[RMDB]
RNA sequence: GGGAACGACUCGAGUAGAGUCGAAAAGAUAUGGAGAAAGCGUUUUUCAACCAUCUAGCGUUGAAACUAGGUCUCGGAAACGAGACUAGUGGAGCUAGUAUGGUUGAAAAACGCUUUCUCCUAAGUCGUUACUUAAUCACUUCGGUGAUUAAGUAACAAAAGAAACAACAACAACAAC
Reactivity to DMS in 0.01 (KOAc 150mM, MgCl2 10mM, bicine 150mM(pH8.5), 24C), signal-to-noise 2, nucleotides 027 to 126: g000a070u010a300u000g000g000a010g000a010a000a010g020c000g030u010u010u000u010u000c000a020a010c000c000a010u000c010u000a000g020c010g000u010u010g000a210a170a020c010u000a010g000g010u020c010u020c000g000g010a120a150a230c000g000a030g000a080c000u010a000g010u000g010g000a060g000c000u000a000g010u030a000u000g000g010u010u000g010a020a000a000a000a010c010g020c000u000u000u000c000u000c000c000u000a010a070g000u010c120
An RNA of 177 nucleotides, treated with DMS and read out base by base.
Conditions: 150 mM KOAc, 10 mM MgCl2 and 150 mM bicine (pH 8.5), 24 C.
DMS (dimethyl sulfate) methylates the pairing face of unpaired adenines and cytosines.
Reactivities are given for positions 27 through 126.
Source: RMDB library TTRINS, as collected in RNAgym.